Structure probing data (2A3 and DMS) for a 177-nucleotide construct. Conditions: 150 mM KOAc, 10 mM MgCl2 and 150 mM bicine (pH 8.5), 24 C. The DMS profile rests on 23,589 reads. The 2A3 profile rests on 17,251 reads. It was measured as part of the RMDB library M2PK50. 2A3 adducts were read by reverse transcription with SuperScript II with manganese.
[RMDB]
RNA sequence: GGGAACGACUCGAGUAGAGUCGAAAAAACUACUUCUUCGGAAGUAGUUAUUGCGUGGGUCUAAUAAGGCCAAGGUGCCAGGUUCGACCCUUGCUGGGCGCAUCACCGACCGAUUCGUCGGUCGGAAAGAUAUGUCGUAAUUCGUUACGACAUAUCUAAAAGAAACAACAACAACAAC
Reactivity to 2A3 in 0.01 (KOAc 150mM, MgCl2 10mM, bicine 150mM(pH8.5), 24C), signal-to-noise 5, nucleotides 027 to 126: a010a000c000u000a000c000u010u000c000u020u030c280g050g000a000a000g000u000a000g000u000u020a140u080u100g000c010g020u050g010g000g000u010c010u020a030a030u070a240a090g020g000c000c070a060a110g190g050u240g010c010c010a040g100g040u010u030c020g010a020c000c000c000u000u090g000c030u020g020g060g010c040g000c030a040u090c040a030c020c000g000a000c000c010g010a010u020u050c170g060u010c000g060g000u000c000g000g000a020a000
Reactivity to DMS in 0.01 (KOAc 150mM, MgCl2 10mM, bicine 150mM(pH8.5), 24C), signal-to-noise 9, nucleotides 027 to 126: a020a010c000u000a000c000u000u000c000u000u020c200g020g000a020a000g010u000a000g000u000u000a010u000u000g010c020g020u000g010g010g010u000c000u000a040a040u010a120a110g010g010c000c010a120a090g010g010u010g020c010c010a120g020g010u000u000c110g000a030c010c000c010u000u010g010c040u000g000g000g010c070g020c070a070u010c160a200c010c000g000a010c000c000g000a020u000u010c160g020u000c000g010g010u000c000g010g000a010a030